An RNA of 177 nucleotides, treated with 2A3 and DMS and read out base by base.
For DMS the reverse transcriptase was MarathonRT.
The reactions ran in a buffer of 150 mM KOAc, 10 mM MgCl2 and 150 mM bicine (pH 8.5), at 24 C.
For 2A3, 1,499 sequencing reads were counted.
It was measured as part of the RMDB library TTRINS.

RNA sequence: GGGAACGACUCGAGUAGAGUCGAAAAGAUAUGGAGGUCUGGUAGAGCUUGGAUUUACAUGGAAGACUACUAAAUCGGAAACGAUUUAGUAGUCCCAUGUUGUCAGCUCAAACAGACCUCCUAAGUCCAAUGUCGCUAUGUUCGCAUAGCGACAUUGAAAAGAAACAACAACAACAAC
Reactivity to 2A3 in 0.01 (KOAc 150mM, MgCl2 10mM, bicine 150mM(pH8.5), 24C), signal-to-noise 1, nucleotides 027 to 126: g090a030u160a090u250g020g010a020g030g010u040c000u090g060g000u090a040g000a000g030c090u130u240g210g000a130u300u300u230a030c000a010u000g000g000a300a160g010a150c010u000a010c000u000a010a000a030u000c010g000g090a080a130a080c000g010a010u000u000u010a000g020u000a010g020u000c010c000c000a000u000g030u000u010g000u050c000a000g000c010u000c010a020a030a000c000a000g000a000c000c020u020c000c010u010a010a000g000u000c000
Reactivity to DMS in 0.01 (KOAc 150mM, MgCl2 10mM, bicine 150mM(pH8.5), 24C), signal-to-noise 2, nucleotides 027 to 126: g000a080u010a300u010g000g020a020g020g000u010c010u020g010g020u010a300g010a020g020c010u030u020g060g010a050u000u000u000a010c000a010u000g020g000a150a170g000a030c000u010a020c000u000a000a000a010u000c000g010g000a160a120a240c000g010a020u000u000u000a010g010u000a000g010u000c000c010c000a000u000g010u000u000g000u000c010a040g000c000u000c010a020a100a300c010a010g010a010c000c000u000c000c010u000a020a080g000u010c010